[RMDB]
Structure probing data (DMS and 2A3) for a 177-nucleotide construct.
For 2A3 the reverse transcriptase was SuperScript II with manganese.
For DMS, 12,663 sequencing reads were counted.
Values cover nucleotides 27 to 126.
RNA sequence: GGGAACGACUCGAGUAGAGUCGAAAACUUAGUGAGUUCGCUCACUAAGGGACUCUGGAACCCAGGCUGGAGAGGGACCAAGUAGGACGCUGGGCACCACCAACAUUCAGCGCUUCGGCGCUGAAAAUCGUGUAUUUAGAUUCGUCUAAAUACACGAAAAAGAAACAACAACAACAAC
Reactivity to DMS in 0.01 (KOAc 150mM, MgCl2 10mM, bicine 150mM(pH8.5), 24C), signal-to-noise 8, nucleotides 027 to 126: c010u000u000a000g010u000g000a010g020u000u010c240g020c000u000c000a010c000u000a000a010g010g000g010a120c060u000c030u010g000g010a130a110c040c020c020a070g010g020c040u010g010g010a090g000a110g000g000g000a110c060c050a060a080g010u000a080g010g010a090c100g010c050u000g010g010g010c070a090c040c030a080c060c060a050a070c120a140u000u000c000a010g000c000g010c000u000u010c200g030g000c000g010c000u000g000a000a020a070a090
Reactivity to 2A3 in 0.01 (KOAc 150mM, MgCl2 10mM, bicine 150mM(pH8.5), 24C), signal-to-noise 4, nucleotides 027 to 126: c000u010u000a000g000u000g010a000g010u030u130c180g080c100u000c000a000c000u000a000a000g010g010g000a020c020u010c050u090g040g070a070a070c010c010c010a030g070g000c030u040g020g030a050g000a060g060g010g010a020c010c030a070a030g040u040a060g090g070a030c040g010c100u030g030g000g000c010a020c020c010a010c000c010a030a060c000a060u030u020c000a000g010c010g000c020u040u070c210g110g000c000g000c000u000g000a010a000a000a050